An RNA of 177 nucleotides, treated with 2A3 and DMS and read out base by base.
For DMS, 1,503 sequencing reads were counted.
For DMS the reverse transcriptase was MarathonRT.
It was measured as part of the RMDB library M2PK50.
The RNA was probed in 150 mM KOAc, 10 mM MgCl2 and 150 mM bicine (pH 8.5) at 24 C.
RNA sequence: GGGAACGACUCGAGUAGAGUCGAAAACUCAACUCGUUCGCGAGUUGAGAAACCCGAUGAAGCGGCACUUAGACAGCUUCAUACAGCUAAGAAAAGUGCUAAAAAGAAAACGGUUCGCCGUUUUCAACAAACGGAAUAUCUUCGGAUAUUCCGUUUGAAAAGAAACAACAACAACAAC
Reactivity to 2A3 in 0.01 (KOAc 150mM, MgCl2 10mM, bicine 150mM(pH8.5), 24C), signal-to-noise 1, nucleotides 027 to 126: c000u010c000a000a000c000u000c000g030u050u040c110g050c000g080a010g010u000u000g000a000g000a040a020a000c000c000c010g020a140u170g110a090a020g160c070g040g020c000a000c010u010u010a030g020a140c030a020g000c000u000u020c010a000u040a010c140a020g000c030u070a170a040g060a090a110a020a000g000u000g030c030u050a130a050a000a010a020g000a000a010a000a000c010g030g010u020u080c220g030c040c030g000u000u010u000u010c000a000a030
Reactivity to DMS in 0.01 (KOAc 150mM, MgCl2 10mM, bicine 150mM(pH8.5), 24C), signal-to-noise 2, nucleotides 027 to 126: c000u010c000a000a000c010u000c010g010u000u010c180g010c010g010a010g000u000u010g000a020g010a020a130a090c000c010c020g010a080u010g000a090a070g020c220g000g020c000a010c050u000u000a070g000a240c220a010g000c000u000u000c210a050u020a090c270a030g030c030u000a030a120g000a110a100a020a000g000u000g020c000u000a020a070a090a090a050g000a000a000a000a000c000g010g020u000u010c180g000c000c000g000u000u000u000u010c000a110a160